[RMDB]
RNA sequence: GGGAACGACUCGAGUAGAGUCGAAAAAUCGCCGAUCUUGGCUGGAAAACCGCUUUCCGCUUUGUGGAGCCGCAGGGCGCGGCAAGCCUCAAGGCCAGCCUGGAGGCGGGCAAGCGGGUCAAGCUUAAUGAGUAUAGCGUUUCGACGCUAUACUCAUAAAAGAAACAACAACAACAAC
Reactivity to 2A3 in 0.01 (KOAc 150mM, MgCl2 10mM, bicine 150mM(pH8.5), 24C), signal-to-noise 1, nucleotides 027 to 126: a000u070c050g050c040c000g000a080u030c030u090u090g010g000c000u000g070g050a060a100a100a090c000c020g010c010u030u020u010c010c020g000c080u080u020u080g100u090g040g040a040g000c000c010g050c130a030g060g200g030c060g010c040g120g000c030a020a040g040c000c030u080c040a040a040g010g000c000c050a040g030c040c020u040g180g010a030g020g000c070g000g010g000c090a000a020g000c000g000g010g020u020c020a000a010g000c000u060u140a080
Reactivity to DMS in 0.01 (KOAc 150mM, MgCl2 10mM, bicine 150mM(pH8.5), 24C), signal-to-noise 3, nucleotides 027 to 126: a100u000c080g020c010c000g000a130u010c050u010u010g000g010c010u000g010g000a040a060a130a230c030c010g000c020u000u000u000c020c020g020c000u000u000u000g000u000g010g010a210g000c010c010g010c200a170g020g000g010c130g000c090g000g000c120a080a080g020c000c020u000c060a130a220g010g010c010c080a140g010c010c020u010g010g010a050g000g020c000g000g000g010c200a030a040g020c010g010g010g000u000c040a050a030g020c140u010u000a080

The record gives the reactivity of an RNA of 177 nucleotides to 2A3 and DMS. The DMS profile rests on 2,453 reads. Reactivities are given for positions 27 through 126. It was measured as part of the RMDB library OK2TST.